[RMDB]
RNA sequence: GGGAACGACUCGAGUAGAGUCGAAAACUUUCCAUAUCUGGUCCUCAGAUAUGUGGUGUGAAUGAAGGGGGGACCAGCUAUCCGAGGCCAACCGAGGCUCCACAGUUGGCUGCCAUGUCAUUUUGCCAGCAGCUAAUAUGUUCGCAUAUUAGCUGCUAAAAGAAACAACAACAACAAC
Reactivity to 2A3 in 0.01 (KOAc 150mM, MgCl2 10mM, bicine 150mM(pH8.5), 24C), signal-to-noise 1, nucleotides 027 to 126: c020u050u090u000c040c010a010u000a030u060c000u010g000g030u040c000c010u030c030a060g070a210u150a110u090g080u010g000g070u070g010u010g150a280a300u110g000a170a160g050g040g000g010g020g000a000c000c000a000g060c000u030a050u000c050c010g080a010g000g070c000c000a010a010c040c000g020a000g030g010c000u010c010c020a040c010a030g050u060u010g000g010c030u020g060c050c040a160u130g060u130c040a080u020u090u000u170g050c020c010
Reactivity to DMS in 0.01 (KOAc 150mM, MgCl2 10mM, bicine 150mM(pH8.5), 24C), signal-to-noise 2, nucleotides 027 to 126: c210u010u000u000c040c010a060u000a010u010c010u010g000g010u010c070c030u000c030a080g000a050u010a040u000g030u020g020g000u000g000u010g040a110a070u000g010a120a170g010g000g010g010g010g000a040c010c010a030g000c140u010a060u000c120c090g020a190g000g030c020c030a030a040c050c100g020a150g000g000c060u000c010c080a080c070a120g010u010u000g000g000c010u010g000c080c050a070u000g010u020c060a070u000u010u000u010g010c130c080